[RMDB]
RNA sequence: GGGAACGACUCGAGUAGAGUCGAAAAAUGCAGCUUAUGUUCCUUGCACUGUGUUCGAUCUUUGCAGCUUUGCUAUUCUGUACCUCUGCCGCAAUCGUUGCUGGAGAUGCUUCGGACGCUGUGUGCGAGUUGGGCCUGCCACGCAUGUUUUGGGCUCGAGCUCUUAAUAUUUCGAUAUUAAGAGCUCAAAAGAAACAACAACAACAAC
Reactivity to DMS in 0.01 (KOAc 150mM, MgCl2 10mM, bicine 150mM(pH8.5), 24C), signal-to-noise 2, nucleotides 027 to 156: a090u000g010c050a080g000c030u010u000a060u020g020u000u010c070c020u000u000g010c050a060c010u000g020u010g020u000u000c050g020a070u000c040u020u000u010g020c020a040g020c070u010u000u000g010c080u010a120u000u000c070u000g040u000a050c060c010u010c030u000g010c020c070g060c070a050a080u000c100g010u000u020g030c000u010g030g010a160g010a110u010g020c040u000u010c010g020g010a040c030g030c030u000g020u000g030u010g020c050g030a070g020u010u000g010g020g010c000c000u000g040c040c050a070c070g050c060a130u010g000u010u000u000u000g020g010g030c070u020c090
Reactivity to 2A3 in 0.01 (KOAc 150mM, MgCl2 10mM, bicine 150mM(pH8.5), 24C), signal-to-noise 6, nucleotides 027 to 156: a000u110g010c030a040g020c060u190u100a060u230g050u080u060c010c000u030u060g010c010a000c020u020g010u010g000u060u030c010g010a040u040c020u040u080u080g010c010a000g010c010u090u140u130g020c010u040a070u190u130c060u090g110u120a160c020c060u110c060u110g080c050c040g020c040a020a070u090c080g040u040u030g010c040u060g060g030a060g020a040u070g090c080u050u040c010g000g010a010c000g010c060u070g070u040g010u010g080c030g000a020g030u080u080g020g000g000c020c010u040g030c020c020a090c060g090c030a030u070g050u040u070u070u080g060g000g010c010u040c100